[RMDB]
RNA sequence: GGGAACGACUCGAGUAGAGUCGAAAAGAUAUGGACCAGGCUUUUGACGGAGUAAUUCGGAAACGAAUUAAACUCCGAUAAGCCUGCGUCCUAAGUCAAAACGGCUCGAUGUUCGCAUCGAGCCGAAGUAUUAAUGGUACUUCGGUACCAUUAAUACAAAAGAAACAACAACAACAAC
Reactivity to 2A3 in 0.01 (KOAc 150mM, MgCl2 10mM, bicine 150mM(pH8.5), 24C), signal-to-noise 5, nucleotides 027 to 126: g000a000u020a010u060g000g000a010c000c000a010g010g020c020u120u150u190u300g300a200c110g000g000a000g020u030a000a020u010u010c000g000g000a030a020a010c010g010a020a010u030u040a160a130a070c010u000c000c010g020a010u010a000a000g010c000c000u000g010c020g010u000c000c000u010a010a000g010u000c020a010a010a110a170c010g010g010c000u000c010g000a000u010g060u090u110c300g030c140a000u000c000g000a000g020c000c000g000a020a000
Reactivity to DMS in 0.01 (KOAc 150mM, MgCl2 10mM, bicine 150mM(pH8.5), 24C), signal-to-noise 5, nucleotides 027 to 126: g000a020u000a160u010g010g010a020c000c000a010g010g010c000u000u000u000u010g010a130c070g010g010a020g030u000a030a010u000u000c010g020g000a030a040a090c000g010a020a000u000u000a070a110a170c010u000c000c000g010a080u000a000a010g000c000c000u000g000c200g010u000c000c000u000a000a080g000u010c020a070a070a100a230c030g010g000c010u000c010g010a010u000g000u000u010c250g020c010a010u000c000g000a010g000c000c000g000a000a030